This 177-nucleotide RNA was probed chemically with 2A3 and DMS. The RNA was probed in 150 mM KOAc, 10 mM MgCl2 and 150 mM bicine (pH 8.5) at 24 C. As a SHAPE reagent, 2A3 marks flexible, mostly unpaired nucleotides at the ribose 2'-OH. It was measured as part of the RMDB libraries RFM100 and RFMREP.
RNA sequence: GGGAACGACUCGAGUAGAGUCGAAAAGUAUAGAGUAGCGACUGUAUAAUUUCUAUUGAGGUUAACGUUUAUAUGUAGUGAUAGUAGUUAAAGUUCUCCCAAGGAAGACUACUCGGGUACACUUUGCCAACAUGUCCUCGUUCGCGAGGACAUGUUGAAAAGAAACAACAACAACAAC
Reactivity to 2A3 in 0.01 (KOAc 150mM, MgCl2 10mM, bicine 150mM(pH8.5), 24C), signal-to-noise 2, nucleotides 027 to 126: g000u000a000u100a100g030a000g020u020a060g060c010g120a070c100u090g160u140a040u040a220a070u000u070u040c030u030a190u020u240g060a150g010g090u020u020a070a010c030g000u050u280u010a120u050a010u210g300u120a070g020u030g150a150u120a150g030u000a000g000u010u100a080a010a000g000u010u000c040u020c040c030c030a000a000g080g000a040a000g030a020c000u000a000c010u000c020g050g190g000u000a000c050a040c050u010u080u050g080c040
Reactivity to DMS in 0.01 (KOAc 150mM, MgCl2 10mM, bicine 150mM(pH8.5), 24C), signal-to-noise 2, nucleotides 027 to 126: g000u020a040u000a120g010a050g040u000a050g000c030g020a100c020u000g010u000a100u020a010a060u000u000u000c030u040a090u020u030g000a210g010g000u000u000a030a040c060g010u010u020u000a030u040a060u040g000u010a050g000u030g010a150u010a030g020u020a050g020u010u010a010a080a080g000u000u000c030u000c020c040c030a080a110g000g000a070a060g000a140c020u000a000c010u000c010g000g020g010u030a050c050a120c040u000u000u000g000c120